[RMDB]
RNA sequence: GGGAACGACUCGAGUAGAGUCGAAAACAUCUUCGAGCAAUGGUGAUGGAACAUCAUCGUUAUAAGGAACAGGCGGCAAAAUUGAAGCAGAAGGAAGAUUUCAGACGCUUGAUGGUGAUAUAUAGGAAACUAGCAUCCAUUUCGAUGGAUGCUAGUUAAAAGAAACAACAACAACAAC
Reactivity to 2A3 in 0.01 (KOAc 150mM, MgCl2 10mM, bicine 150mM(pH8.5), 24C), signal-to-noise 2, nucleotides 027 to 126: c010a050u010c030u130u070c030g060a060g000c040a030a110u040g000g070u010g030a010u050g120g180a080a060c030a060u010c000a000u000c020g000u060u030a110u020a110a090g060g000a020a050c020a040g040g040c020g050g000c060a030a050a130a180u110u090g020a060a020g000c040a040g040a080a010g090g030a040a030g020a090u000u070u000c000a040g000a090c010g010c040u040u060g020a040u060g050g040u050g040a010u020a000u020a020u060a170g130g070a090
Reactivity to DMS in 0.01 (KOAc 150mM, MgCl2 10mM, bicine 150mM(pH8.5), 24C), signal-to-noise 4, nucleotides 027 to 126: c080a080u010c020u000u010c030g010a130g020c110a060a040u000g010g030u000g020a050u010g010g040a120a160c050a030u000c010a010u000c010g020u000u010a090u010a100a160g000g000a080a140c090a070g020g010c030g020g000c060a050a080a050a100u000u000g010a100a070g000c050a060g010a080a040g000g010a100a100g000a130u010u000u000c030a120g000a110c140g000c030u010u000g020a060u000g010g010u000g010a080u000a050u010a100u010a090g010g000a150